This 177-nucleotide RNA was probed chemically with 2A3 and DMS. For DMS, 18,752 sequencing reads were counted. The RNA was probed in 150 mM KOAc, 10 mM MgCl2 and 150 mM bicine (pH 8.5) at 24 C. It was measured as part of the RMDB library TTRDES.
RNA sequence: GGGAACGACUCGAGUAGAGUCGAAAAGAUAUGGACGUGAAGGACUUUUGACGGACGUACCAUCGGAAACGAUGGGACGUCCGAUAAGUCCCACGUCCUAAGUCAAACAGGUCGUUCGCGACCUGAAGGUAUAGCUAAUGUUCGCAUUAGCUAUACCAAAAGAAACAACAACAACAAC
Reactivity to 2A3 in 0.01 (KOAc 150mM, MgCl2 10mM, bicine 150mM(pH8.5), 24C), signal-to-noise 9, nucleotides 027 to 126: g020a010u050a030u110g000g000a010c010g030u020g120a300a140g040g010a020c050u110u140u250u290g240a200c300g000g000a000c000g000u010a030c000c010a010u000c000g010g000a040a030a010c020g000a000u010g000g000g000a000c000g000u000c000c000g000a000u010a000a000g000u000c010c000c000a000c000g000u000c000c000u000a000a000g010u000c010a020a050a120c010a010g000g000u000c000g030u090u140c300g010c010g180a000c000c000u010g050a090a060
Reactivity to DMS in 0.01 (KOAc 150mM, MgCl2 10mM, bicine 150mM(pH8.5), 24C), signal-to-noise 8, nucleotides 027 to 126: g010a050u010a300u000g000g010a010c000g020u000g010a250a160g010g000a020c000u000u010u000u010g020a230c200g000g010a010c000g020u000a020c010c000a010u000c000g010g000a100a090a150c010g010a020u000g000g000g000a000c000g010u000c000c000g010a010u000a000a020g000u000c000c010c000a010c000g010u000c000c000u000a010a060g010u000c030a140a150a270c010a010g000g000u000c000g020u000u010c270g030c020g010a010c000c000u000g000a050a050